An RNA of 177 nucleotides, treated with DMS and 2A3 and read out base by base. Reactivities are given for positions 27 through 126. Values are in units of 0.01, from 0 to 300, in steps of 10. The RNA was probed in 150 mM KOAc, 10 mM MgCl2 and 150 mM bicine (pH 8.5) at 24 C.
RNA sequence: GGGAACGACUCGAGUAGAGUCGAAAAGAUAUGGACAUAGGACAUGAAUUCGUUCGGAAACGAACGAUAUUCAACAGCCUAGUCCUAAGUCAAAAGUGAAAAACGUGGUUCGCCACGUUUUUCACAAGUAGUCUUCUUAGUUCGCUAAGAAGACUACAAAAGAAACAACAACAACAAC
Reactivity to DMS in 0.01 (KOAc 150mM, MgCl2 10mM, bicine 150mM(pH8.5), 24C), signal-to-noise 5, nucleotides 027 to 126: g000a040u000a300u000g000g000a020c010a120u000a010g010g000a050c060a170u000g000a020a010u010u000c000g010u000u000c000g010g010a110a100a170c000g010a000a010c000g010a010u010a000u000u000c000a030a080c280a170g000c010c020u000a020g000u000c000c000u000a030a060g010u000c030a050a070a090a130g010u000g010a000a010a000a010a000c000g040u000g000g000u000u010c220g010c000c000a010c000g000u010u000u000u000u000c000a010c000a050a070
Reactivity to 2A3 in 0.01 (KOAc 150mM, MgCl2 10mM, bicine 150mM(pH8.5), 24C), signal-to-noise 4, nucleotides 027 to 126: g030a020u080a050u120g020g000a010c160a290u030a000g020g000a020c050a180u080g000a010a000u010u000c000g000u000u000c010g000g040a070a050a030c000g010a010a000c010g000a000u030a010u050u000c010a030a010c040a030g040c000c000u010a000g000u000c000c000u000a110a000g020u020c040a030a000a110a160g000u010g000a010a000a010a000a000c010g000u010g010g050u070u160c270g080c060c000a000c000g000u000u000u000u010u000c000a000c000a000a000